[RMDB]
RNA sequence: GGGAACGACUCGAGUAGAGUCGAAAAACCUGAUUCCUUCGGGAAUCAGGUAAAAACCGUAGGCCUUAUCAUGGGAGCGAUUACUUCGAAAGAGGUACUCGCAUCGAUCAUGUAAGAGGCCUAAACGGAAAAAAGGUGAACGUUCGCGUUCACCUAAUGCAUUAAGCUAAUUCGUUAGCUUAAUGCAAAAAGAAACAACAACAACAAC
Reactivity to DMS in 0.01 (KOAc 150mM, MgCl2 10mM, bicine 150mM(pH8.5), 24C), signal-to-noise 2, nucleotides 027 to 156: a050c000c000u000g010a010u000u000c000c000u010u020c300g090g010g030a010a000u000c010a000g010g010u000a000a010a030a120a010c000c000g020u010a050g000g000c000c000u000u000a190u010c010a030u000g000g010g010a070g010c000g000a050u000u000a010c010u000u000c010g020a170a100a240g000a050g000g010u000a020c150u000c000g060c000a080u010c160g000a080u000c000a020u000g020u000a080a260g010a030g000g020c000c000u000a010a020a050c000g010g010a000a050a060a070a050a040g000g000u040g000a010a000c000g000u010u000c300g040c020g050u000u000c010a000c000c020u000a000a030
Reactivity to 2A3 in 0.01 (KOAc 150mM, MgCl2 10mM, bicine 150mM(pH8.5), 24C), signal-to-noise 3, nucleotides 027 to 156: a000c000c000u000g000a000u000u000c000c010u030u130c270g060g000g000a000a000u010c010a000g000g000u000a010a000a000a020a010c010c000g010u020a010g000g000c000c010u040u010a070u110c000a010u000g000g010g020a020g000c000g000a000u010u010a000c000u000u010c020g060a110a050a030g000a000g000g010u000a000c010u000c000g020c070a050u110c020g010a070u060c000a000u010g000u010a190a160g030a000g070g050c000c000u000a000a010a000c000g030g040a100a050a020a060a020a000g020g010u060g000a000a000c000g010u060u080c230g020c000g110u000u000c010a000c010c000u010a010a030

Description
This 207-nucleotide RNA was probed chemically with DMS and 2A3. The DMS profile rests on 5,679 reads. The data come from the RNA Mapping Database (RMDB), library RNAMAK. The reactions ran in a buffer of 150 mM KOAc, 10 mM MgCl2 and 150 mM bicine (pH 8.5), at 24 C. The 2A3 profile rests on 3,352 reads. Values are in units of 0.01, from 0 to 300, in steps of 10.